[RMDB]
Background:
The record gives the reactivity of an RNA of 177 nucleotides to 2A3 and DMS.

RNA sequence: GGGAACGACUCGAGUAGAGUCGAAAAGAUAUGGAGCCAAGGUCACAGCAACAGCUCGGAAACGAGACAUGCUGUUGACUUGGCUCCUAAGUCAAAACAAUAAAGAAUCUUCGGAUUCUUUAUUGAACAACUAUGUGUAGUUCGCUACACAUAGUUGAAAAGAAACAACAACAACAAC
Reactivity to 2A3 in 0.01 (KOAc 150mM, MgCl2 10mM, bicine 150mM(pH8.5), 24C), signal-to-noise 6, nucleotides 027 to 126: g030a040u070a030u150g000g000a000g010c000c010a020a010g280g120u100c000a000c000a010g000c000a020a090c030a200g040c000u000c000g010g010a080a090a030c000g010a000g040a050c030a050u080g000c000u010g020u090u040g000a000c000u000u000g000g000c000u000c000c000u000a000a000g000u000c000a010a040a060a130c000a000a010u010a000a010a000g000a000a010u000c020u110u230c300g050g000a010u000u000c000u010u000u010a010u000u010g000a020a020
Reactivity to DMS in 0.01 (KOAc 150mM, MgCl2 10mM, bicine 150mM(pH8.5), 24C), signal-to-noise 7, nucleotides 027 to 126: g000a050u000a300u010g000g000a010g000c000c000a000a010g010g010u010c010a020c010a010g010c000a030a090c240a170g010c000u000c010g000g000a100a080a220c010g000a010g010a040c070a180u000g010c010u000g000u010u000g010a030c000u000u000g000g010c000u000c000c000u010a000a050g010u010c020a100a080a120a210c000a000a000u000a000a010a010g000a010a000u000c000u000u010c210g010g000a020u000u000c000u000u000u000a000u000u000g000a090a170
For DMS the reverse transcriptase was MarathonRT. For 2A3 the reverse transcriptase was SuperScript II with manganese. It was measured as part of the RMDB library TTRDEL. The DMS profile rests on 10,843 reads.